[RMDB]
RNA sequence: GGGAACGACUCGAGUAGAGUCGAAAAUGGCUUAUUCCACUAAGCAGAACAUCAAGGUUCAUCCAUGAGAUUGCAUGUGUCAAAAUGUCCUUCCUUUUUAAGGCUGAAUGAUGUUCCAUUGCGUGUAAAUCGUUGAACGGUUCGCCGUUCAACGAUUAAAAGAAACAACAACAACAAC
Reactivity to DMS in 0.01 (KOAc 150mM, MgCl2 10mM, bicine 150mM(pH8.5), 24C), signal-to-noise 2, nucleotides 027 to 126: u000g030g020c040u000u010a070u000u000c080c050a100c170u020a080a030g050c030a160g010a010a030c020a040u010c040a180a080g010g020u000u000c040a020u000c010c020a100u000g030a110g000a040u000u000g040c080a030u010g000u020g000u010c090a090a060a090a120u010g010u000c000c030u000u000c030c000u000u000u000u000u050a060a090g000g000c060u010g010a050a080u010g010a030u000g000u000u010c000c170a050u010u000g010c110g020u010g010u000a060
Reactivity to 2A3 in 0.01 (KOAc 150mM, MgCl2 10mM, bicine 150mM(pH8.5), 24C), signal-to-noise 1, nucleotides 027 to 126: u040g090g000c000u040u020a020u230u100c050c010a020c040u020a030a030g010c060a030g030a060a020c000a030u000c030a020a130g170g040u050u060c010a030u020c020c020a050u050g000a000g020a070u150u000g000c060a000u000g110u020g030u120c030a000a010a170a140u130g020u030c000c010u000u030c000c000u010u130u090u010u070a080a030g000g000c000u000g010a030a070u060g000a020u020g000u000u060c040c000a130u120u140g020c030g010u090g050u050a040
The record gives the reactivity of an RNA of 177 nucleotides to DMS and 2A3.
The data come from the RNA Mapping Database (RMDB), library OK2TRN.
For 2A3 the reverse transcriptase was SuperScript II with manganese.
The RNA was probed in 150 mM KOAc, 10 mM MgCl2 and 150 mM bicine (pH 8.5) at 24 C.
For DMS, 1,530 sequencing reads were counted.